[RMDB]
RNA sequence: GGGAACGACUCGAGUAGAGUCGAAAAUGUAAGUAGCUGUCAGGCCGUGUGAGGGGCAUGUCACAGGGUAUCAUGUGUGAGGGCAUUUGUGUCUCUUGAGCUACCAGGCUCCAGUCCCUUCCCAGCCGCAAACGUAACGGUUCGCCGUUACGUUUGCAAAAGAAACAACAACAACAAC
Reactivity to DMS in 0.01 (KOAc 150mM, MgCl2 10mM, bicine 150mM(pH8.5), 24C), signal-to-noise 1, nucleotides 027 to 126: u010g000u000a060a080g030u010a030g010c050u010g030u000c110a070g020g010c040c020g000u010g000u040g000a050g000g000g000g020c030a090u000g000u000c020a020c040a060g030g010g030u010a050u010c010a020u000g010u000g070u000g000a040g010g000g000c010a150u010u020u010g010u000g020u000c000u000c000u000u000g000a040g000c000u000a150c160c210a170g010g000c020u000c010c020a080g010u000c000c000c010u020u020c040c010c000a140g000c080c100